[RMDB]
RNA sequence: GGGAACGACUCGAGUAGAGUCGAAAAUGCCACGGCGGUGCUGCACAUCGGCCAGUACUACGGCGCGCCCCGCCUGGUCGGCCUCUGCGAGCGGAUGCUGGCGCGCGAGAUCCGGCACCGCGACGCCGGGCCGAACUAAAUUCGUUUAGUUCGGCCCAAAAGAAACAACAACAACAAC
Reactivity to DMS in 0.01 (KOAc 150mM, MgCl2 10mM, bicine 150mM(pH8.5), 24C), signal-to-noise 6, nucleotides 027 to 126: u010g010c020c020a090c150g010g010c000g010g010u000g010c010u000g040c080a100c220a130u010c130g020g000c020c030a100g020u010a100c110u010a110c120g020g000c040g020c070g000c050c080c040c040g000c030c020u000g010g010u000c100g000g010c060c040u000c100u010g030c020g010a300g000c010g000g000a130u000g010c030u000g010g010c070g020c090g010c130g000a090g000a090u010c070c020g000g000c010a040c020c000g000c010g010a030c060g010c060c260
Reactivity to 2A3 in 0.01 (KOAc 150mM, MgCl2 10mM, bicine 150mM(pH8.5), 24C), signal-to-noise 4, nucleotides 027 to 126: u170g030c010c000a020c040g040g000c000g000g020u030g020c040u100g020c060a050c030a260u160c060g070g010c020c000a030g050u090a060c070u070a060c080g040g000c010g000c010g010c040c000c000c000g010c010c020u030g030g020u070c060g050g060c000c020u100c080u120g030c020g030a040g010c020g040g010a140u040g020c040u030g010g020c030g000c030g020c050g110a060g010a100u050c020c010g010g000c000a000c010c010g000c000g020a030c010g020c010c050

The record gives the reactivity of an RNA of 177 nucleotides to DMS and 2A3. The data come from the RNA Mapping Database (RMDB), library OK2TRN. Reactivities are given for positions 27 through 126. For DMS the reverse transcriptase was MarathonRT. The reactions ran in a buffer of 150 mM KOAc, 10 mM MgCl2 and 150 mM bicine (pH 8.5), at 24 C.